[RMDB]
RNA sequence: GGGAACGACUCGAGUAGAGUCGAAAAGUGCAGCAGUUCGCUGCUGCACAAAAGGCAUCGUAUCAUUGCUUCGAAGCCAAACUAGAAACUAGAAAGCUGUGAAAAGACACUUCUUCGGAAGUGUCAACGUACUAUGCUACUUCGGUAGCAUAGUACGAAAAGAAACAACAACAACAAC
Reactivity to 2A3 in 0.01 (KOAc 150mM, MgCl2 10mM, bicine 150mM(pH8.5), 24C), signal-to-noise 3, nucleotides 027 to 126: g020u000g000c000a010g000c000a000g010u030u120c160g030c110u000g000c000u000g010c000a000c000a000a060a010a010g000g000c010a040u010c030g030u040a030u110c020a090u030u180g010c000u000u030c010g020a030a000g000c020c000a050a020a000c040u050a070g150a170a160a040c030u020a060g150a120a140a010g050c090u080g050u020g120a040a070a040a020g010a000c000a000c000u010u020c010u000u070c180g080g010a000a010g000u010g000u000c000a000a000
Reactivity to DMS in 0.01 (KOAc 150mM, MgCl2 10mM, bicine 150mM(pH8.5), 24C), signal-to-noise 2, nucleotides 027 to 126: g000u000g000c000a000g010c000a010g010u010u030c150g040c010u000g000c000u010g000c000a000c010a030a060a100a060g000g050c010a140u000c050g030u000a030u000c030a040u000u000g000c020u000u000c010g010a040a070g020c020c000a090a060a200c100u000a090g010a120a070a060c130u010a110g010a080a060a050g030c020u000g040u000g000a090a100a060a100g010a020c000a010c000u000u000c000u000u010c210g000g010a000a000g000u000g030u000c000a000a050